This 177-nucleotide RNA was probed chemically with 2A3 and DMS.
It was measured as part of the RMDB library TTRINS.
2A3 adducts were read by reverse transcription with SuperScript II with manganese.
[RMDB]
RNA sequence: GGGAACGACUCGAGUAGAGUCGAAAAGAUAUGGACAUAUAUGUCGCCCUUACGAAGAACGUACGUUAGUCGGAAACGACUAACGUACGGGAGUAAGGGAACUACGAUGCAUAUAUGUCCUAAGUCACAUUUAGCAAAGCUUCGGCUUUGCUAAAUGAAAAGAAACAACAACAACAAC
Reactivity to 2A3 in 0.01 (KOAc 150mM, MgCl2 10mM, bicine 150mM(pH8.5), 24C), signal-to-noise 2, nucleotides 027 to 126: g010a010u020a020u050g010g000a010c020a000u020a000u000a000u010g050u050c040g000c000c000c000u000u020a040c100g140a300a300g150a300a040c000g020u000a000c000g010u000u000a000g020u010c010g000g000a040a020a010c020g010a000c000u000a000a000c010g000u000a000c000g000g020g010a070g000u000a000a020g040g060g030a010a010c000u110a060c040g160a180u300g030c040a000u030a000u000a000u010g000u000c000c000u000a000a000g000u000c010a010
Reactivity to DMS in 0.01 (KOAc 150mM, MgCl2 10mM, bicine 150mM(pH8.5), 24C), signal-to-noise 1, nucleotides 027 to 126: g000a020u000a120u000g000g010a010c000a020u000a020u000a010u000g020u010c050g000c000c000c000u000u000a000c000g000a210a230g050a140a180c010g000u010a010c000g010u000u010a000g000u000c020g000g010a020a000a050c010g000a020c000u000a000a000c000g010u010a000c010g010g000g020a190g000u000a000a000g010g030g030a030a030c110u020a300c070g010a090u010g010c020a000u000a010u000a000u010g000u000c000c000u000a000a050g000u000c010a300

Source information:
Values are in units of 0.01, from 0 to 300, in steps of 10.